[RMDB]
RNA sequence: GGGAACGACUCGAGUAGAGUCGAAAACGUCAGAUGACGAAGUCGGUCCAUCUGCGGUAAAAGACCGACAUAGAGUUCGAAGCAGAACGAACAACCGCAGAUACACGAUUGGAGUGUGAAUGAGAGAACUAUUAGCGCUGUUCGCAGCGCUAAUAGUAAAAGAAACAACAACAACAAC
Reactivity to DMS in 0.01 (KOAc 150mM, MgCl2 10mM, bicine 150mM(pH8.5), 24C), signal-to-noise 3, nucleotides 027 to 126: c020g030u000c000a130g060a140u040g010a020c000g000a120a170g020u000c020g020g020u000c000c130a050u020c000u010g020c030g030g000u000a070a050a040a090g000a020c000c000g020a010c030a080u010a050g000a170g000u000u000c010g030a100a110g000c300a180g010a130a050c010g000a030a010c010a150a000c010c010g030c000a000g010a020u000a010c150a060c060g050a110u000u000g000g060a240g000u000g020u000g010a080a150u030g010a150g000a090g020a150
Reactivity to 2A3 in 0.01 (KOAc 150mM, MgCl2 10mM, bicine 150mM(pH8.5), 24C), signal-to-noise 4, nucleotides 027 to 126: c030g000u020c020a080g050a300u230g010a150c020g010a040a000g000u000c000g030g030u000c020c030a030u000c000u000g000c020g000g000u050a000a000a000a060g010a000c000c000g000a000c000a010u060a000g110a000g020u010u000c010g000a110a020g170c140a060g050a110a030c000g000a050a000c010a010a000c020c010g000c000a000g000a000u020a000c060a000c040g220a160u120u240g070g010a220g040u050g010u010g060a090a120u200g020a030g000a010g000a070